[RMDB]
RNA sequence: GGGAACGACUCGAGUAGAGUCGAAAAGUAAAAGGUCUGACUUCCGAGGUCGCCUCCCAGCAGCCUACAUCCCCAGCUGCUUACCUCUCUCCCAUCAUGCUCUAGUAGUGCUAUCAUGGGCAAACACUAUUGCAGAAUACUUCGGUAUUCUGCAAUAAAAAGAAACAACAACAACAAC
Reactivity to 2A3 in 0.01 (KOAc 150mM, MgCl2 10mM, bicine 150mM(pH8.5), 24C), signal-to-noise 7, nucleotides 027 to 126: g160u170a030a090a050a050g070g040u040c090u050g040a040c010u090u070c050c040g030a060g050g060u050c020g010c020c010u020c010c010c000a010g010c000a000g000c010c010u050a070c050a110u090c010c000c000c010a010g010c020u030g000c010u020u100a080c010c000u040c010u000c000u010c010c010c000a040u060c010a020u070g010c010u000c000u020a070g040u040a020g020u070g080c040u050a050u200c020a070u060g010g020g040c000a070a080a000c030a010c070
Reactivity to DMS in 0.01 (KOAc 150mM, MgCl2 10mM, bicine 150mM(pH8.5), 24C), signal-to-noise 5, nucleotides 027 to 126: g010u040a040a090a140a110g000g020u000c030u020g010a070c040u000u020c050c070g000a110g000g010u010c040g000c060c020u000c000c010c010a080g000c020a050g010c010c020u010a090c110a110u020c010c010c010c050a220g010c020u000g000c020u000u010a060c060c030u010c040u000c050u000c010c010c020a070u010c130a070u010g020c030u010c030u000a090g000u020a050g020u000g000c040u010a040u010c090a070u000g000g000g010c090a080a070a090c160a060c140